[RMDB]
Structure probing data (DMS) for a 177-nucleotide construct. Reactivities are given for positions 27 through 126. High DMS reactivity at an A or C suggests that its Watson-Crick edge is free. For DMS, 1,728 sequencing reads were counted. Reactivities are rounded to 0.1 and cut off at 0 and 3. The reactions ran in a buffer of 150 mM KOAc, 10 mM MgCl2 and 150 mM bicine (pH 8.5), at 24 C.
RNA sequence: GGGAACGACUCGAGUAGAGUCGAAAAGAUAUGGAAUGCUUUGAUCCACGAAAUACACUGGGUCCCUAUGAAGGCCUCGGAAACGAGGCUGGAGGGACGUGUAUUUCGUGGGGAGCAUUCCUAAGUCCCUUUUACAUUGCUUCGGCAAUGUAAAAGGAAAAGAAACAACAACAACAAC
Reactivity to DMS in 0.01 (KOAc 150mM, MgCl2 10mM, bicine 150mM(pH8.5), 24C), signal-to-noise 1, nucleotides 027 to 126: g000a090u000a270u000g010g000a000a010u010g010c010u000u010u050g020a090u020c020c000a000c010g000a000a010a000u000a010c010a010c020u030g010g020g010u000c010c000c010u000a270u010g000a210a230g000g030c010c000u010c000g020g000a100a100a250c000g010a010g000g040c000u000g000g000a000g040g030g000a020c000g010u000g000u000a010u000u000u010c000g040u010g010g000g010g010a000g030c010a010u000u020c000c000u010a000a080g000u000c050